[RMDB]
RNA sequence: GGGAACGACUCGAGUAGAGUCGAAAAAAAAACGCCACACAAAACCUAUUAAGUGACUGAUAAGCUUCUGGGUUGGCUCCUGAUGCUCUUCUGUCUGGAACUGGAACUUCCACUUGAUGAAGGUACCGGAAGGUCUACCUUUCGAGGUAGACCUUCCAAAAGAAACAACAACAACAAC
Reactivity to 2A3 in 0.01 (KOAc 150mM, MgCl2 10mM, bicine 150mM(pH8.5), 24C), signal-to-noise 2, nucleotides 027 to 126: a000a000a000a000a000c160g030c020c070a070c010a000c030a020a040a030a040c010c010u020a040u140u090a130a040g040u020g070a020c010u050g020a130u070a190a030g000c030u020u040c010u080g030g030g000u060u060g030g000c000u010c040c000u040g020a040u030g010c030u050c010u120u000c030u070g050u000c030u050g020g050a070a050c020u000g030g050a020a040c040u000u020c000c000a060c030u060u030g070a120u100g040a190a100g060g020u090a100c030c030